Overview: An RNA of 207 nucleotides, treated with DMS and 2A3 and read out base by base. As a SHAPE reagent, 2A3 marks flexible, mostly unpaired nucleotides at the ribose 2'-OH. For DMS, 3,275 sequencing reads were counted. Values are in units of 0.01, from 0 to 300, in steps of 10.
RNA sequence: GGGAACGACUCGAGUAGAGUCGAAAAAAUGGAACUAAUUUUGUUAGAAAUUUGGAUGAAGAUACACCAGACGGUAGACUAGACAUCACAACUGAAGAUGGAAAAGGAAUUAUCCGAUAUGCUUCUAAGAUUCAUGAAUCAACUGGUAAAAACACAAAAAUACUUUACCGUUCGCGGUAAAGUAUUUAAAAGAAACAACAACAACAAC
Reactivity to DMS in 0.01 (KOAc 150mM, MgCl2 10mM, bicine 150mM(pH8.5), 24C), signal-to-noise 2, nucleotides 027 to 156: a070a080u000g000g020a090a120c030u020a050a100u010u000u000u020g010u010u000a080g020a130a060a140u000u000u020g030g000a110u000g010a060a030g010a180u000a080c050a050c040c020a050g000a090c060g010g000u000a080g010a100c060u000a130g010a150c040a060u000c020a040c060a070a090c170u000g000a080a090g010a070u000g030g020a060a100a120a110g000g000a060a080u010u000a090u010c040c030g020a090u010a040u010g040c050u000u000c060u000a090a130g000a100u010u010c020a100u000g000a060a060u000c050a090a100c100u000g020g050u000a040a020a050a050a050c090a060c110a030a100
Reactivity to 2A3 in 0.01 (KOAc 150mM, MgCl2 10mM, bicine 150mM(pH8.5), 24C), signal-to-noise 3, nucleotides 027 to 156: a000a000u100g000g030a030a020c030u070a050a110u120u070u180u050g050u070u180a050g050a100a170a110u060u060u100g050g000a010u040g030a030a060g020a030u040a040c050a000c020c030a020g020a040c040g070g020u060a020g020a040c050u010a030g010a050c000a010u070c030a010c030a150a140c060u180g030a090a000g020a030u050g000g020a110a140a040a020g030g030a060a090u130u020a030u140c000c010g000a000u010a030u160g030c000u060u040c020u040a060a080g000a080u110u010c020a010u120g060a050a030u030c010a020a050c030u010g000g020u060a050a030a010a060a020c080a040c030a090a080